[RMDB]
Chemical mapping of a 177-nucleotide RNA with 2A3 and DMS. DMS adducts were read by reverse transcription with MarathonRT. It was measured as part of the RMDB library TTRDEL. For DMS, 1,602 sequencing reads were counted.

RNA sequence: GGGAACGACUCGAGUAGAGUCGAAAAGAUAUGGAUUGCGACGAUCAUGUCUUCGAAGAACUCGGAAACGAGGGAGAAGGUCAUGGGAGCAAUCCUAAGUCAAAAUCGAGGGGUUCGCCCCUCGAAACUAUUACCUCACCUUCGGGUGAGGUAAUAGAAAAGAAACAACAACAACAAC
Reactivity to 2A3 in 0.01 (KOAc 150mM, MgCl2 10mM, bicine 150mM(pH8.5), 24C), signal-to-noise 2, nucleotides 027 to 126: g030a020u060a050u160g000g010a010u000u030g030c050g040a180c000g010a300u020c010a000u000g020u040c020u030u000c080g280a300a110g000a060a030c010u000c010g010g000a060a060a030c000g000a010g000g010g020a040g000a000a000g050g090u190c000a020u010g000g040g000a040g000c010a000a000u020c000c010u010a030a020g080u030c050a060a020a010a240u050c010g010a000g000g000g000g050u130u110c230g210c000c000c040c010u020c000g000a000a000a000
Reactivity to DMS in 0.01 (KOAc 150mM, MgCl2 10mM, bicine 150mM(pH8.5), 24C), signal-to-noise 2, nucleotides 027 to 126: g020a060u000a300u000g000g000a000u000u010g000c010g020a100c170g000a050u000c010a000u000g010u020c000u000u000c000g010a070a110g010a100a200c000u000c000g010g000a130a090a250c000g010a010g020g000g000a080g010a010a010g000g010u020c010a010u020g010g000g000a030g010c000a010a020u000c010c000u000a050a090g010u000c010a070a070a130a110u000c010g000a020g010g000g000g030u000u010c290g010c000c010c000c000u000c010g000a010a040a110